[RMDB]
Record summary:
This 177-nucleotide RNA was probed chemically with 2A3 and DMS. 2A3 adducts were read by reverse transcription with SuperScript II with manganese.
RNA sequence: GGGAACGACUCGAGUAGAGUCGAAAAUCGUACUGGGCCGUGUAAAUGUGUGUCGGGUAGGGACUAUUCGCCGGGGUUGCGCCAUUGAACGGCACGUCCAGGAACGGGAUGUAGAAGCCGGGGAAGCCUGGUAUUGACCUUUCGAGGUCAAUACCAGAAAAGAAACAACAACAACAAC
Reactivity to 2A3 in 0.01 (KOAc 150mM, MgCl2 10mM, bicine 150mM(pH8.5), 24C), signal-to-noise 3, nucleotides 027 to 126: u080c000g000u030a000c010u020g040g030g030c030c050g030u040g020u060a050a130a190u150g100u000g000u000g040u080c040g000g010g030u050a020g020g040g000a030c030u060a120u080u110c080g050c060c000g000g000g020g050u100u130g090c020g000c030c010a060u100u150g090a110a000c010g000g000c000a010c010g020u000c000c000a040g020g000a060a040c030g020g030g000a010u040g000u030a020g010a190a000g060c030c000g010g000g000g030a030a020g040c000
Reactivity to DMS in 0.01 (KOAc 150mM, MgCl2 10mM, bicine 150mM(pH8.5), 24C), signal-to-noise 3, nucleotides 027 to 126: u050c030g040u020a030c030u010g020g020g000c020c060g010u000g020u020a050a060a040u040g000u020g030u010g000u040c060g020g000g020u020a060g000g000g000a090c100u020a080u000u000c070g020c040c040g030g000g010g020u010u010g010c070g000c010c030a080u010u020g000a070a140c120g010g000c000a070c060g020u020c010c010a050g000g010a070a110c110g000g000g000a050u000g000u020a070g000a060a160g000c000c020g000g020g000g000a110a110g020c120
The data come from the RNA Mapping Database (RMDB), library OK1LIB.